RNA sequence: GGGAACGACUCGAGUAGAGUCGAAAACUUGAGCUUAGCGGUUAUAAUCGACUUGAGGCCUUCAGGCUCGAAGAGUAAUUGCAUGUUGGGCUGGGAAAUGCAUAUAGUCACACGAUUUCGAACGCCCCCAUCCGCUAGUCUUCGGACUAGCGGAUGGAAAAGAAACAACAACAACAAC
Reactivity to 2A3 in 0.01 (KOAc 150mM, MgCl2 10mM, bicine 150mM(pH8.5), 24C), signal-to-noise 3, nucleotides 027 to 126: c010u050u120g030a000g010c060u090u130a050g000c040g090g010u060u060a070u090a110a090u100c040g080a110c030u030u020g050a070g080g110c030c020u170u080c050a110g000g050c050u020c050g000a030a000g000a000g070u120a150a120u010u010g010c040a040u060g050u110u030g060g000g000c040u060g000g090g060a000a140a000u120g040c100a010u130a050u040a150g160u110c000a000c000a000c090g110a060u000u040u070c040g000a100a020c050g030c020c010c000
Reactivity to DMS in 0.01 (KOAc 150mM, MgCl2 10mM, bicine 150mM(pH8.5), 24C), signal-to-noise 1, nucleotides 027 to 126: c040u010u000g000a000g010c040u010u030a130g050c200g000g000u000u000a100u010a110a170u000c000g010a150c040u010u000g000a030g010g000c190c070u050u000c150a030g000g000c190u020c000g050a030a060g040a290g000u000a000a120u010u030g000c070a060u010g010u000u050g010g000g050c000u000g030g000g040a040a010a010u000g050c120a020u000a090u000a050g040u000c050a080c230a060c080g000a160u020u000u000c010g000a150a150c300g000c030c000c040